Chemical mapping of a 177-nucleotide RNA with DMS.

RNA sequence: GGGAACGACUCGAGUAGAGUCGAAAAAAGAUAUGGACAUGGAGAUAGCUGAUGAACUACUCUCGGGCCAGCUCGGAAACGAGCUGGUCUCUAGCGUGGAGCAUCCGAAACCAUGUCCUAAGUCAAACUGAGGGUUAAUGUUCGCAUUAACCCUCAGAAAAGAAACAACAACAACAAC
Reactivity to DMS in 0.01 (KOAc 150mM, MgCl2 10mM, bicine 150mM(pH8.5), 24C), signal-to-noise 1, nucleotides 027 to 126: a230a090g010a030u000a300u000g000g000a010c000a020u000g000g010a110g020a090u000a230g000c300u010g010a010u000g020a010a030c020u000a020c010u000c000u010c300g040g000g000c000c000a040g010c020u010c010g000g000a100a110a150c010g000a000g000c010u000g000g000u000c000u010c000u000a000g010c160g000u000g000g020a050g030c020a000u020c020c090g010a170a180a140c000c000a020u000g000u000c000c000u000a000a080g020u000c010a050a110a180